The record gives the reactivity of an RNA of 207 nucleotides to 2A3 and DMS. 2A3 adducts were read by reverse transcription with SuperScript II with manganese. Values cover nucleotides 27 to 156. For DMS, 2,424 sequencing reads were counted. Conditions: 150 mM KOAc, 10 mM MgCl2 and 150 mM bicine (pH 8.5), 24 C. The 2A3 profile rests on 1,999 reads.
RNA sequence: GGGAACGACUCGAGUAGAGUCGAAAAAUCAGCCUUCGUUCUGUAAACGGGGUUGGAUCCGACUCUCAUAGGCGCUCCAACCCAACUCCUACUCAAUACGUCCUCGUCGUACAGAACGGUAACAUGUAAAACGAAGGCUGCUUCGGCAGCCUUCGAAGUAUAUGUUUCUCUUCGGAGAAACAUAUACAAAAGAAACAACAACAACAAC
Reactivity to 2A3 in 0.01 (KOAc 150mM, MgCl2 10mM, bicine 150mM(pH8.5), 24C), signal-to-noise 3, nucleotides 027 to 156: a000u080c030a030g050c000c030u060u080c030g000u020u000c010u010g030u040a040a060a080c060g020g000g000g010u000u020g010g000a040u140c050c010g070a060c040u050c010u040c150a170u160a200g020g010c040g010c030u000c000c000a000a010c000c010c000a010a010c010u060c020c000u060a120c020u050c090a050a120u100a190c050g090u080c020c030u080c020g040u020c020g000u010a000c000a000g010a010a000c010g010g000u040a040a030c040a090u110g090u200a050a060a010a080c010g000a000a000g000g000c000u000g000c000u020u020c040g070g000c000a010g000c000c000u000u000c000g000a000a000
Reactivity to DMS in 0.01 (KOAc 150mM, MgCl2 10mM, bicine 150mM(pH8.5), 24C), signal-to-noise 1, nucleotides 027 to 156: a140u000c040a120g020c030c030u000u000c000g000u000u010c010u010g040u010a100a070a080c060g010g020g000g040u000u010g000g010a040u000c050c000g070a010c020u000c080u000c170a110u000a010g010g010c010g020c190u000c010c000a020a050c030c000c010a070a060c010u010c060c000u020a120c030u010c020a100a200u000a130c080g030u000c000c040u000c000g020u000c050g000u000a090c030a010g010a010a010c030g010g000u000a050a050c050a080u010g020u000a080a070a060a220c030g000a070a020g040g010c000u000g000c020u000u000c240g070g000c000a020g030c010c000u010u000c000g000a000a050